[RMDB]
RNA sequence: GGGAACGACUCGAGUAGAGUCGAAAAGUAGAGGAAAGUUCUAUAUAACACAACAUAUGUAAUUGUGUUAUCUGAUAACAAUUAUCGUGAUUGUGUAUUCUCCUCAUAUUGUUUAUUCAAGUAGAAAGAUCAUAUCUGAGUUCGCUCAGAUGUGAUCAAAAGAAACAACAACAACAAC
Reactivity to DMS in 0.01 (KOAc 150mM, MgCl2 10mM, bicine 150mM(pH8.5), 24C), signal-to-noise 2, nucleotides 027 to 126: g010u010a010g000a020g010g020a030a120a120g010u000u020c060u050a060u010a040u000a060a010c010a000c000a000a010c000a040u000a050u020g010u000a020a040u000u000g010u000g000u000u010a010u030c150u030g010a030u010a150a020c010a060a000u000u000a060u030c300g020u050g000a280u000u000g000u000g000u000a300u000u010c070u000c000c020u000c010a080u030a140u010u010g000u000u000u000a050u060u010c120a030a020g000u010a090g010a000a020a030
Reactivity to 2A3 in 0.01 (KOAc 150mM, MgCl2 10mM, bicine 150mM(pH8.5), 24C), signal-to-noise 1, nucleotides 027 to 126: g050u100a000g010a020g040g100a120a040a000g010u060u000c080u020a180u020a030u050a170a000c000a000c000a030a000c000a020u130a000u290g070u020a030a000u060u000g000u000g030u040u060a110u020c060u090g010a010u030a150a000c000a000a000u000u000a030u110c010g000u010g050a300u000u000g000u000g000u000a020u030u000c010u000c000c000u000c040a010u050a000u020u000g000u000u040u000a100u080u050c060a040a000g080u050a080g240a080a030a000

The record gives the reactivity of an RNA of 177 nucleotides to DMS and 2A3. The data come from the RNA Mapping Database (RMDB), library OK1LIB. The RNA was probed in 150 mM KOAc, 10 mM MgCl2 and 150 mM bicine (pH 8.5) at 24 C. The DMS profile rests on 2,487 reads.